Description:
An RNA of 207 nucleotides, treated with DMS and 2A3 and read out base by base. 2A3 adducts were read by reverse transcription with SuperScript II with manganese. It was measured as part of the RMDB library M2RFPK. The RNA was probed in 150 mM KOAc, 10 mM MgCl2 and 150 mM bicine (pH 8.5) at 24 C.
RNA sequence: GGGAACGACUCGAGUAGAGUCGAAAAGUCCUGCCAUGAGACCGCAACGAGAGCAUGUCGCAUCGAAUGGACUCGGGGAGUCGGCAGCUUGCCCCACUGAUGAGCGCCUAAUGCCGGCAUUCGGGAAAAUAGACUGGAUAGUUCGCUAUCCAGUCAAGUAUUAGAGUGGGUUCGCCCACUCUAAUACAAAAGAAACAACAACAACAAC
Reactivity to DMS in 0.01 (KOAc 150mM, MgCl2 10mM, bicine 150mM(pH8.5), 24C), signal-to-noise 1, nucleotides 027 to 156: g000u000c010c020u040g000c110c010a060u000g010a140g020a030c030c110g000c020a130a260c020g000a080g030a170g030c050a110u000g000u000c040g000c000a100u000c040g030a210a280u000g010g010a080c050u010c040g030g000g090g010a140g060u000c020g030g000c020a050g010c080u000u000g000c010c010c000c050a300c060u000g020a150u000g030a010g000c020g050c040c060u000a120a100u000g000c030c050g040g000c010a210u010u030c000g000g100g000a090a030a060a120u000a140g000a030c000u000g000g010a030u000a010g010u000u000c300g030c000u000a020u000c000c010a000g000u030c010a010a070
Reactivity to 2A3 in 0.01 (KOAc 150mM, MgCl2 10mM, bicine 150mM(pH8.5), 24C), signal-to-noise 4, nucleotides 027 to 156: g020u040c010c010u010g030c030c000a060u050g040a020g020a070c020c100g040c070a050a090c080g060a060g000a010g200c050a120u190g050u110c050g000c040a040u050c040g020a050a050u070g020g050a050c010u010c060g000g000g000g000a090g030u040c010g010g010c020a030g010c040u060u110g040c010c030c020c030a090c090u150g090a190u110g010a060g040c030g040c050c050u100a110a050u050g010c030c020g000g020c020a010u080u080c020g000g000g090a020a020a020a130u120a060g000a010c000u000g000g000a000u000a010g000u040u070c210g010c080u000a010u010c020c010a000g000u000c010a000a010